[RMDB]
RNA sequence: GGGAACGACUCGAGUAGAGUCGAAAAGAGAAGGGGCACUUGACCCUGGACCCCUUCCUCCAGGACAGGGAUGGACCAGUGCUGUGGGCAUGGCUGCAGGAGCCAGAACUUGAGCCAGCUGUGUGGGGGAGUAACGUAUCUUCGGAUACGUUACUCCAAAAGAAACAACAACAACAAC
Reactivity to DMS in 0.01 (KOAc 150mM, MgCl2 10mM, bicine 150mM(pH8.5), 24C), signal-to-noise 1, nucleotides 027 to 126: g000a150g000a110a000g020g000g010g020c160a100c140u010u000g010a190c030c030c030u000g000g010a210c010c000c020c000u010u000c030c010u000c050c030a060g010g000a100c050a090g000g000g000a120u000g010g000a070c060c050a050g010u000g000c040u000g020u010g020g020g000c020a040u010g010g020c020u000g020c020a060g020g010a070g020c010c060a050g000a050a090c050u010u020g020a130g010c090c020a020g000c060u000g000u000g000u010g000g000g030
An RNA of 177 nucleotides, treated with DMS and read out base by base. Values are in units of 0.01, from 0 to 300, in steps of 10. For DMS the reverse transcriptase was MarathonRT. The RNA was probed in 150 mM KOAc, 10 mM MgCl2 and 150 mM bicine (pH 8.5) at 24 C. It was measured as part of the RMDB library OK2TRN.